[RMDB]
RNA sequence: GGGAACGACUCGAGUAGAGUCGAAAAUGGCUUCAUGUUUUCUUUCGUUGAGGGUGCUUUGGUGAAGGCGGUUCGUUCCGGACACUGGGUAUUACUAGACGAGAUUAAUUUGGCAUCAUUAGAGACAUCAUCAGUGCUCAUUCGUGAGCACUGAUGAAAAAGAAACAACAACAACAAC
Reactivity to DMS in 0.01 (KOAc 150mM, MgCl2 10mM, bicine 150mM(pH8.5), 24C), signal-to-noise 1, nucleotides 027 to 126: u000g010g000c150u000u010c030a010u000g000u010u020u000u010c040u000u010u010c060g000u000u010g020a180g020g000g020u010g020c050u020u010u010g050g010u010g010a110a140g000g000c060g000g010u000u000c120g000u010u000c010c010g000g030a100c060a010c040u010g000g000g010u020a050u010u000a040c100u000a140g010a040c060g020a050g010a080u010u010a020a050u010u010u010g020g010c050a050u010c040a050u000u000a090g010a260g010a090c090a090
Overview:
An RNA of 177 nucleotides, treated with DMS and read out base by base. The reactions ran in a buffer of 150 mM KOAc, 10 mM MgCl2 and 150 mM bicine (pH 8.5), at 24 C. The DMS profile rests on 1,404 reads. Source: RMDB library OK2TST, as collected in RNAgym.